Chemical mapping of a 177-nucleotide RNA with DMS and 2A3. The RNA was probed in 150 mM KOAc, 10 mM MgCl2 and 150 mM bicine (pH 8.5) at 24 C. For 2A3, 1,978 sequencing reads were counted. 2A3 adducts were read by reverse transcription with SuperScript II with manganese. For DMS the reverse transcriptase was MarathonRT. The DMS profile rests on 1,374 reads. Source: RMDB library OK2TRN, as collected in RNAgym.
RNA sequence: GGGAACGACUCGAGUAGAGUCGAAAAGUAGCAUCUAAUUAUCUCAUUGAGUCUCAUGCCAACGCUCACCUCCUAUUUGUCGGAGGUGCAAAUAGGCAUGAGAGACGUUGGGAUGACUCAAUGCUGAGCAGUGCAGAGUAUUCGUACUCUGCACUGCAAAAGAAACAACAACAACAAC
Reactivity to DMS in 0.01 (KOAc 150mM, MgCl2 10mM, bicine 150mM(pH8.5), 24C), signal-to-noise 2, nucleotides 027 to 126: g030u010a050g010c040a050u020c060u000a090a100u000u010a040u000c010u000c000a020u000u010g010a050g010u010c080u000c020a020u000g010c020c000a050a060c300g000c140u000c010a050c020c060u000c000c010u000a160u010u010u000g000u020c210g030g020a080g010g000u010g010c050a010a030a040u000a060g000g020c120a030u000g020a070g000a020g010a000c020g020u000u000g000g000g000a000u000g010a010c010u000c150a020a030u000g000c080u000g000a100
Reactivity to 2A3 in 0.01 (KOAc 150mM, MgCl2 10mM, bicine 150mM(pH8.5), 24C), signal-to-noise 2, nucleotides 027 to 126: g050u060a000g040c020a050u070c050u070a110a020u050u060a040u030c000u010c010a020u010u060g030a060g110u020c010u000c020a000u050g060c000c000a070a010c050g030c020u030c010a030c000c010u000c000c010u110a150u110u120u130g130u100c090g070g160a070g010g030u030g000c000a000a000a000u030a010g000g030c000a030u040g010a000g000a000g020a000c000g020u000u020g020g020g040a010u010g000a010c000u000c050a000a020u010g010c010u020g050a000